[RMDB]
RNA sequence: GGGAACGACUCGAGUAGAGUCGAAAAUUGCUGCUCUCAGGCACACCAAAUGAAAAAUUGGUGACAACCUCCACGGCGCCUGAUUUUGUAGCAUUUAAUGUCUUUCAGGGCAUUGAAACGGCUGUUGCAAGUGUGGCGUUCGCGCCACACAAAAGAAACAACAACAACAAC
Reactivity to DMS in 0.01 (KOAc 150mM, MgCl2 10mM, bicine 150mM(pH8.5), 24C), signal-to-noise 4, nucleotides 027 to 129: u020u020g000c040u000g000c060u000c240u000c000a150g080g100c000a300c030a010c020c000a120a080a180u000g090a000a040a020a130a160u000u000g020g040u120g000a160c120a210a150c060c020u000c170c160a130c220g000g050c130g000c010c020u070g020a080u040u010u020u000g000u050a000g010c050a050u000u100u040a120a000u020g000u000c040u000u090u110c220a110g010g040g000c020a030u010u040g040a000a000a120c110g020g020c070u030g100u000u070g040c040a090a010
Reactivity to 2A3 in 0.01 (KOAc 150mM, MgCl2 10mM, bicine 150mM(pH8.5), 24C), signal-to-noise 2, nucleotides 027 to 129: u110u070g000c000u000g000c000u020c020u000c000a000g000g000c010a050c000a000c000c000a010a000a040u120g110a100a050a020a030a020u010u010g000g010u000g010a020c060a010a060c000c050u210c140c050a140c060g080g020c010g000c000c000u010g030a020u080u070u100u100g020u030a000g020c010a000u020u000u000a030a000u000g010u010c050u020u300u090c130a090g060g050g040c010a000u000u030g070a010a110a000c000g080g000c000u000g040u100u020g020c100a020a020